[RMDB]
RNA sequence: GGGAACGACUCGAGUAGAGUCGAAAAGAGUCAUACAACCCCAGAAACCAUUCCUUAUACCUUGAGUAUUGCUGAAUUCAGUUUAGCGUGCAUGCUCUUGGCUAUUCUCAUAGUGAUUCUCAAAUUUAAAACGACGAUGACUUCGGUCAUCGUCGAAGACGUAGACAACCUUCGGGUUGUCUACGUCAAAAGAAACAACAACAACAAC
Reactivity to 2A3 in 0.01 (KOAc 150mM, MgCl2 10mM, bicine 150mM(pH8.5), 24C), signal-to-noise 2, nucleotides 027 to 156: g010a020g030u010c020a020u090a300c030a080a150c000c000c020c010a020g090a080a020a000c060c000a050u090u160c000c050u070u070a020u010a200c030c020u020u070g000a020g020u040a010u100u130g000c010u030g070a170a160u180u170c100a200g130u100u070u200a060g040c160g020u040g030c000a000u020g000c000u000c000u020u020g000g050c000u020a030u060u060c070u000c040a180u120a040g070u130g030a050u080u010c010u000c020a030a070a170u190u190u300a260a120a020a050c000g000a000c000g000a000u000g000a000c000u010u000c170g040g010u000c000a010u000c000g010u010c000g000a000a000